An RNA of 177 nucleotides, treated with 2A3 and DMS and read out base by base. The DMS profile rests on 7,086 reads. It was measured as part of the RMDB library RFMREP. High 2A3 reactivity points to a flexible backbone, as in loops and unpaired stretches. Conditions: 150 mM KOAc, 10 mM MgCl2 and 150 mM bicine (pH 8.5), 24 C.
RNA sequence: GGGAACGACUCGAGUAGAGUCGAAAACCUUUUGAAGAAUGAGCCUGCGAGUUAGCGGCAUGUCGCGAGGUUAACCCGUGUGGGGUAGCCGUAGCGAAAGCGAGUCCGAAUAGGGCGUUUGUAGUGGCGUACAAGAUAUCUUCGGAUAUCUUGUACGAAAAGAAACAACAACAACAAC
Reactivity to 2A3 in 0.01 (KOAc 150mM, MgCl2 10mM, bicine 150mM(pH8.5), 24C), signal-to-noise 2, nucleotides 027 to 126: c000c000u010u090u100u190g090a040a050g010a010a050u100g010a030g060c020c080u070g020c120g040a150g200u080u090a070g090c020g030g010c020a020u120g070u010c000g000c000g000a060g030g020u050u030a110a090c000c020c000g010u250g090u240g100g000g010g000u040a000g000c000c040g000u060a000g010c000g000a000a010a000g000c010g040a050g020u000c000c010g030a090a100u110a210g000g010g000c000g010u040u090u110g070u060a100g020u040g120g000
Reactivity to DMS in 0.01 (KOAc 150mM, MgCl2 10mM, bicine 150mM(pH8.5), 24C), signal-to-noise 5, nucleotides 027 to 126: c010c000u000u000u010u010g010a120a120g010a130a080u010g000a120g010c020c010u010g040c040g010a140g020u010u000a120g010c040g010g010c030a070u000g010u000c010g000c010g010a200g010g010u000u000a040a050c010c000c000g010u010g030u020g020g010g000g020u000a030g010c010c000g000u010a230g000c000g000a020a070a140g000c040g000a060g020u000c000c000g000a120a110u010a160g000g000g000c020g020u000u000u000g010u000a080g010u010g010g000